This 177-nucleotide RNA was probed chemically with DMS and 2A3. DMS adducts were read by reverse transcription with MarathonRT. For 2A3, 2,317 sequencing reads were counted. It was measured as part of the RMDB library TTRDEL. Values cover nucleotides 27 to 126. Conditions: 150 mM KOAc, 10 mM MgCl2 and 150 mM bicine (pH 8.5), 24 C.
RNA sequence: GGGAACGACUCGAGUAGAGUCGAAAAGAUAUGGAUUAGCUUUUGACGUCGACUAAUCGGAAACGAUUAGAAUCGACGAUAAGCUGGAUCCUAAGUCAAAACGCGAGGUUGUUCGCAACCUCGCGAAUCUAAUUGCACCGUUCGCGGUGCAAUUAGAAAAAGAAACAACAACAACAAC
Reactivity to DMS in 0.01 (KOAc 150mM, MgCl2 10mM, bicine 150mM(pH8.5), 24C), signal-to-noise 2, nucleotides 027 to 126: g000a050u000a270u020g010g020a020u000u000a030g010c000u010u010u010u000g000a250c150g030u000c000g020a030c000u000a010a000u010c010g020g000a090a090a120c010g010a020u000u000a000g000a100a090u000c000g030a010c000g010a070u000a030a010g020c000u010g020g030a010u000c000c010u000a060a140g000u000c030a080a030a080a160c000g020c010g010a030g010g000u000u000g000u010u010c160g030c000a010a000c010c010u000c010g000c000g000a010a020
Reactivity to 2A3 in 0.01 (KOAc 150mM, MgCl2 10mM, bicine 150mM(pH8.5), 24C), signal-to-noise 1, nucleotides 027 to 126: g010a000u070a020u140g000g010a000u000u020a000g000c010u120u120u040u170g200a150c150g000u000c000g010a000c000u000a000a000u000c000g000g000a070a030a010c000g000a010u040u010a000g120a170a250u030c010g010a010c010g000a000u000a010a000g000c000u010g070g000a000u000c000c000u000a060a020g040u030c030a020a020a080a120c010g010c010g000a010g000g010u020u010g020u100u100c200g010c120a010a000c000c000u000c010g050c000g010a010a000